[RMDB]
RNA sequence: GGGAACGACUCGAGUAGAGUCGAAAAGGAGCGCGUUAGAGCACUGAGGACGCUCGCGUGCCUGACCCGCGCGUAUAGAGCGGCACUAUACGCGUGAGCACGGACGAUCUCAGCUAGUGCCGUACAAGCGGGUAUGUUCCUUCGGGAACAUACCCGCAAAAGAAACAACAACAACAAC
Reactivity to 2A3 in 0.01 (KOAc 150mM, MgCl2 10mM, bicine 150mM(pH8.5), 24C), signal-to-noise 1, nucleotides 027 to 126: g030g000a080g000c080g000c080g020u080u090a080g010a000g040c020a010c100u070g050a150g090g030a040c080g010c000u010c010g000c000g020u010g000c010c050u020g050a020c000c010c010g000c010g010c000g010u010a000u000a000g070a030g000c030g000g020c020a000c050u000a000u000a000c000g000c000g000u000g040a000g000c130a100c050g050g040a060c110g070a110u050c020u020c050a000g040c070u070a010g050u020g000c000c000g030u050a050c020a090a030